[RMDB]
Notes: This 207-nucleotide RNA was probed chemically with 2A3 and DMS. For DMS the reverse transcriptase was MarathonRT. For 2A3, 15,851 sequencing reads were counted. 2A3 adducts were read by reverse transcription with SuperScript II with manganese.

RNA sequence: GGGAACGACUCGAGUAGAGUCGAAAAUGACGUUAAACUGCUGACUCAUACAUACUGACACCGGUUGCUCAACAGACUGUGUGGGACAAUAGAAUAACAAGGCUGUCAAUUUGAGCUUGACGGCUGCAAAACCUGCAGUACUUCGGUACUGCAGGAAGCCAUAAUAUAUCUUCGGAUAUAUUAUGGCAAAAGAAACAACAACAACAAC
Reactivity to 2A3 in 0.01 (KOAc 150mM, MgCl2 10mM, bicine 150mM(pH8.5), 24C), signal-to-noise 9, nucleotides 027 to 156: u110g040a020c080g010u040u060a050a080a060c020u060g030c020u040g040a060c010u020c010a010u040a060c010a020u120a110c020u070g070a040c030a050c110c050g130g020u100u090g030c050u050c070a030a060c010a070g070a110c050u020g000u010g010u010g050g010g010a000c010a020a050u070a080g090a070a050u060a070a020c050a080a040g040g000c010u000g000u000c000a010a000u070u070u190g040a030g040c010u000u000g000a000c000g010g000c000u010g010c020a000a030a040a120c000c000u000g000c000a000g000u000a000c000u010u030c040g060g000u000a000c000u000g000c000a000g000g000a000a000
Reactivity to DMS in 0.01 (KOAc 150mM, MgCl2 10mM, bicine 150mM(pH8.5), 24C), signal-to-noise 3, nucleotides 027 to 156: u000g010a130c080g020u000u000a020a080a190c040u000g000c040u010g010a110c020u000c010a080u010a070c040a080u000a130c040u000g020a120c060a060c030c020g020g020u000u000g020c040u000c040a060a100c040a050g000a170c120u000g040u010g030u000g000g000g010a080c050a050a090u000a090g020a080a190u000a040a070c050a110a180g010g010c000u010g010u000c010a020a030u000u000u000g010a120g020c240u000u000g000a020c020g030g000c010u010g020c080a030a030a080a140c000c000u000g000c000a020g010u000a010c000u000u000c300g040g030u000a000c000u000g010c000a000g000g000a010a050